[RMDB]
RNA sequence: GGGAACGACUCGAGUAGAGUCGAAAAAAAAGAUAUGGAUAUUGGCAAGUCUGAGGUAGCUAAGACAGCGAGUCGGAAACGACUCGUCGAGCUACGCAGGAUGAUGACCCAAUAUCCUAAGUCAAAACUGGUGUACACUGUUCGCAGUGUACACCAGAAAAGAAACAACAACAACAAC
Reactivity to DMS in 0.01 (KOAc 150mM, MgCl2 10mM, bicine 150mM(pH8.5), 24C), signal-to-noise 1, nucleotides 027 to 126: a000a000a160a040g000a020u000a260u000g000g000a130u000a040u000u040g000g060c020a080a130g000u000c000u020g000a300g000g000u000a000g000c040u000a170a190g060a150c300a080g270c020g000a000g000u000c000g020g000a080a040a080c060g000a060c000u000c000g000u100c020g000a080g000c000u000a000c000g020c040a190g000g000a000u000g000a150u000g000a290c300c000c000a000a000u000a060u000c000c000u000a000a130g000u000c000a060a060a000a150